[RMDB]
RNA sequence: GGGAACGACUCGAGUAGAGUCGAAAAGGGGUCUUGCGUAACUAGGUACACUCUUUCUUGCGAGGUAGAGACAUGGACUGAAGCCUCCACGGUCCAACAGCUCUACUACCCACCGCAAGAAAGAGUGUACCUAGUUACCAGCAAGACGGAGGCACCCGAUAUUCAUCGUGUUCGCACGAUGAAUAUCAAAAGAAACAACAACAACAAC
Reactivity to DMS in 0.01 (KOAc 150mM, MgCl2 10mM, bicine 150mM(pH8.5), 24C), signal-to-noise 1, nucleotides 027 to 156: g010g040g030g020u000c030u010u020g030c060g010u000a010a010c030u010a020g040g000u000a000c020a020c010u020c010u000u010u000c000u000u010g000c030g010a150g020g000u010a020g010a010g000a060c040a300u000g020g000a030c000u020g020a080a110g010c040c020u000c010c040a300c050g010g020u010c000c000a010a060c040a200g020c020u000c010u000a020c000u010a010c000c010c020a300c060c020g000c020a030a010g000a030a010a020g010a020g010u000g000u000a000c090c000u000a000g000u000u000a010c060c050a260g040c000a030a080g000a020c070g000g090a020g070g010c040a170c030c030c000
Structure probing data (DMS) for a 207-nucleotide construct. Reactivities are given for positions 27 through 156. For DMS, 2,396 sequencing reads were counted. DMS adducts were read by reverse transcription with MarathonRT. In probing experiments dimethyl sulfate is read out at A N1 and C N3, which are open when not base-paired.